[RMDB]
Conditions: 150 mM KOAc, 10 mM MgCl2 and 150 mM bicine (pH 8.5), 24 C. The record gives the reactivity of an RNA of 177 nucleotides to DMS and 2A3. DMS adducts were read by reverse transcription with MarathonRT. Source: RMDB libraries RFM100 and RFMREP, as collected in RNAgym. For 2A3 the reverse transcriptase was SuperScript II with manganese.

RNA sequence: GGGAACGACUCGAGUAGAGUCGAAAAGGUAACAAGUGCAGUGCGUCCUAGUGGCUCUGAGUGAGGGUUCCGUCCCCUCUCAUCCAUUACAAACGCCCUUUGCCAGUUCCGUCUGGUGAAGUGUGUGACUGUGAAGAUCGUUCGCGAUCUUCACAGUAAAAGAAACAACAACAACAAC
Reactivity to DMS in 0.01 (KOAc 150mM, MgCl2 10mM, bicine 150mM(pH8.5), 24C), signal-to-noise 3, nucleotides 027 to 126: g000g000u010a070a070c090a050a070g040u020g000c060a050g010u000g000c060g000u010c060c160u000a030g040u020g000g000c010u020c000u000g030a030g010u010g020a140g010g000g000u000u050c210c220g000u000c040c000c000c000u010c010u000c010a020u040c010c010a040u020u010a090c130a080a150a090c020g010c000c010c010u010u000u000g000c000c000a020g010u010u050c240c130g020u010c010u000g000g000u000g000a010a010g000u020g010u000g010u020g000
Reactivity to 2A3 in 0.01 (KOAc 150mM, MgCl2 10mM, bicine 150mM(pH8.5), 24C), signal-to-noise 4, nucleotides 027 to 126: g070g070u090a050a040c030a040a090g110u080g100c010a020g010u020g040c040g000u020c020c000u030a040g020u020g020g000c000u000c010u000g040a030g010u070g030a220g010g010g000u180u300c040c050g130u230c030c010c000c000u000c000u000c000a100u080c010c000a000u050u000a040c040a010a120a010c010g010c000c020c000u000u020u000g000c000c000a010g000u190u210c040c040g100u050c030u000g000g000u010g000a010a010g000u010g020u020g020u020g150